Source: RMDB library OK2TRN, as collected in RNAgym. This 177-nucleotide RNA was probed chemically with 2A3 and DMS. The RNA was probed in 150 mM KOAc, 10 mM MgCl2 and 150 mM bicine (pH 8.5) at 24 C.

[RMDB]
RNA sequence: GGGAACGACUCGAGUAGAGUCGAAAAAAUGGCAAGGUAGACGCUGACGUCGUCGGUCGAUUUGCCACCUGCUGCCGUGCCCUGGGCAUCGCGGUUUACCAGCGUAAACGUCCGCCGGACCUGGCUGGUAUUCCCCACGCUUCGGCGUGGGGAAUACAAAAGAAACAACAACAACAAC
Reactivity to 2A3 in 0.01 (KOAc 150mM, MgCl2 10mM, bicine 150mM(pH8.5), 24C), signal-to-noise 1, nucleotides 027 to 126: a000a000u050g020g020c050a060a020g010g030u070a000g050a000c060g000c300u150g030a000c020g300u300c070g040u000c040g080g010u030c070g020a200u010u010u010g040c000c010a000c020c010u030g000c050u070g050c030c020g060u080g000c000c000c100u160g080g000g030c000a010u100c050g000c010g010g000u000u030u050a020c000c000a030g010c010g080u030a000a180a060c070g000u050c000c050g170c150c110g110g000a050c000c010u030g030g000c020u000g040
Reactivity to DMS in 0.01 (KOAc 150mM, MgCl2 10mM, bicine 150mM(pH8.5), 24C), signal-to-noise 1, nucleotides 027 to 126: a070a170u000g020g000c000a030a000g010g010u000a170g020a040c020g010c050u000g010a080c090g010u000c230g030u000c040g000g010u000c060g010a220u000u000u000g030c010c000a080c070c020u000g000c030u000g000c020c060g010u000g020c000c000c070u000g030g000g070c030a020u000c300g000c030g000g000u000u010u010a050c000c030a010g000c090g000u020a020a100a090c270g010u010c010c020g010c140c120g000g000a020c020c080u000g010g000c020u000g040